[RMDB]
RNA sequence: GGGAACGACUCGAGUAGAGUCGAAAACUGAAACAGCUACAGCCUCUGCCUUCACAGGUGCUGGAGUCUAGUGGGAAAGAUAGACAUCUUUUAAAGUCAUUGCAAUGCUGUCUAGGCUGACAGUUUUAAUAGGGGAAAUAGAGAGUGCUAUGGAACACGGAGUGCAUUAGUUCGCUAAUGCACUCCGAAAAGAAACAACAACAACAAC
Reactivity to 2A3 in 0.01 (KOAc 150mM, MgCl2 10mM, bicine 150mM(pH8.5), 24C), signal-to-noise 1, nucleotides 027 to 156: c000u000g020a000a030a010c010a050g010c050u060a060c000a000g000c000c020u060c020u000g040c010c050u090u090c110a070c040a050g080g030u070g000c030u030g020g010a000g020u000c030u060a010g030u090g020g030g000a000a090a000g070a000u080a000g070a030c000a110u060c090u010u100u090u160a080a300a020g010u020c030a070u070u050g020c040a120a020u090g020c020u010g020u070c080u070a050g050g010c010u000g010a020c000a000g000u020u010u090u190a150a250u090a020g030g020g020g060a000a040a040u080a040g050a000g000a000g050u020g040c020u050a030u060g050g020a030a020c050a000